This 177-nucleotide RNA was probed chemically with 2A3 and DMS. For DMS the reverse transcriptase was MarathonRT. The RNA was probed in 150 mM KOAc, 10 mM MgCl2 and 150 mM bicine (pH 8.5) at 24 C. High 2A3 reactivity points to a flexible backbone, as in loops and unpaired stretches.
RNA sequence: GGGAACGACUCGAGUAGAGUCGAAAAUUAAAGGAGGAGGAGGAGGAGGUACGCCUGCAGCUGCUCAGCCGACGUACCGCACACACGCCUUAACGGCAAAGAGCAGCAAAAGGGAAACCAAAAAAAACCUCUUAUUGAAGUUCGCUUCAAUAAGAGGAAAAGAAACAACAACAACAAC
Reactivity to 2A3 in 0.01 (KOAc 150mM, MgCl2 10mM, bicine 150mM(pH8.5), 24C), signal-to-noise 1, nucleotides 027 to 126: u110u050a090a050a020g030g010a000g010g020a010g000g010a010g000g030a020g000g010a030g000g000u010a030c030g050c030c000u030g000c030a020g000c010u010g000c020u000c020a020g010c000c010g050a040c010g010u040a050c020c020g090c010a040c000a010c000a010c060g050c000c020u120u110a160a040c020g000g000c000a070a130a030g000a000g000c020a000g010c000a020a030a050a020g000g000g030a050a040a100c050c040a090a040a020a000a000a020a000a150
Reactivity to DMS in 0.01 (KOAc 150mM, MgCl2 10mM, bicine 150mM(pH8.5), 24C), signal-to-noise 2, nucleotides 027 to 126: u000u000a090a120a060g020g010a060g000g000a040g000g030a070g000g000a020g010g030a080g010g050u010a030c130g010c000c000u020g000c190a130g000c000u000g000c000u000c010a100g000c000c010g060a130c070g000u010a110c100c080g010c070a080c090a130c100a070c130g000c120c010u000u020a030a150c070g010g000c040a060a060a070g020a000g010c010a010g000c020a020a040a100a020g010g020g000a070a100a100c020c050a020a010a020a010a090a050a100a200